[RMDB]
RNA sequence: GGGAACGACUCGAGUAGAGUCGAAAAACGCAUGCAGGGACUUGGGUACCUGAAAUGAUGAUUCUGCAUAUUUCAUGUAGUCUUGAUGCUGAGUCACCUGCUUACCCAUACUACUGGAGGAGGGGAUGAGGAAAGACAGAGUUUGGGCAAAGGAGAAAUUUAUGACUACGUUCGCGUAGUCAUAAAUAAAAGAAACAACAACAACAAC
Reactivity to DMS in 0.01 (KOAc 150mM, MgCl2 10mM, bicine 150mM(pH8.5), 24C), signal-to-noise 3, nucleotides 027 to 156: a050c070g000c070a060u010g030c010a040g010g020g010a040c040u000u010g040g030g030u000a050c030c040u000g000a060a070a080u000g020a040u000g000a090u010u010c040u000g000c020a060u010a110u000u010u010c070a080u010g050u000a100g010u000c090u000u000g020a100u000g020c020u040g010a030g000u000c020a110c000c010u000g040c030u000u010a060c010c020c010a170u000a100c090u000a070c070u010g030g000a090g020g010a120g000g020g020g000a080u000g020a090g020g010a080a060a100g000a110c050a110g000a100g020u000u010u000g000g000g020c040a000a060a080g000g010a100g000a080a080
Reactivity to 2A3 in 0.01 (KOAc 150mM, MgCl2 10mM, bicine 150mM(pH8.5), 24C), signal-to-noise 5, nucleotides 027 to 156: a000c060g040c050a050u160g000c000a000g010g010g000a010c020u030u040g050g010g010u070a050c020c050u050g050a070a080a030u180g080a040u050g020a060u130u080c080u240g030c020a020u020a080u040u150u110c060a030u040g030u050a050g080u060c050u120u180g090a120u130g060c030u020g010a000g000u010c040a150c280c020u010g000c000u000u020a020c000c000c000a010u050a060c030u030a050c020u040g040g020a040g010g020a020g000g030g010g000a010u050g030a040g010g020a080a050a010g020a010c050a020g030a010g040u040u140u110g030g000g000c050a010a060a010g070g010a050g050a010a100
Chemical mapping of a 207-nucleotide RNA with DMS and 2A3. For 2A3, 4,334 sequencing reads were counted. It was measured as part of the RMDB library OK3TST. Reactivities are given for positions 27 through 156. For 2A3 the reverse transcriptase was SuperScript II with manganese. The DMS profile rests on 7,091 reads.